[RMDB]
RNA sequence: GGGAACGACUCGAGUAGAGUCGAAAACGGCUACUCUUCUUUUCCUUUCCUCGUCCUCCCCGGUCAGCCUCCAGAGUUCCUCUUCUUCUUCCUUGCUGAGGCUCUUUCCCCCUGCGGAGAGCUGCUUAUACGACAGUCUUCGGACUGUCGAAAAGAAACAACAACAACAAC
Reactivity to DMS in 0.01 (KOAc 150mM, MgCl2 10mM, bicine 150mM(pH8.5), 24C), signal-to-noise 4, nucleotides 027 to 129: c140g000g000c030u000a080c060u000c030u010u000c000u000u000u000u000c040c010u010u020u010c040c030u000c050g030u030c050c050u000c010c000c010c000g000g060u000c000a050g010c000c000u000c040c050a060g020a090g000u000u000c030c000u000c050u000u000c000u010u000c050u030u000c010c020u010u010g030c050u030g000a060g020g000c050u000c050u020u050u000c000c000c000c000c000u000g040c060g050g010a000g000a060g030c030u010g000c050u010u020a070u000a170
Reactivity to 2A3 in 0.01 (KOAc 150mM, MgCl2 10mM, bicine 150mM(pH8.5), 24C), signal-to-noise 7, nucleotides 027 to 129: c040g060g000c010u070a050c010u040c000u090u030c010u000u070u030u060c000c000u010u060u050c010c010u050c000g080u040c000c000u030c000c000c000c000g000g030u060c030a040g020c000c010u020c010c030a030g020a010g070u030u060c020c000u020c000u060u010c000u040u010c000u040u050c050c000u030u060g020c040u040g030a070g020g000c010u010c000u050u060u050c010c010c000c000c030u070g030c040g020g000a040g000a000g040c010u020g010c010u110u090a130u030a140
The record gives the reactivity of an RNA of 170 nucleotides to DMS and 2A3. It was measured as part of the RMDB library 15KLIB. The reactions ran in a buffer of 150 mM KOAc, 10 mM MgCl2 and 150 mM bicine (pH 8.5), at 24 C.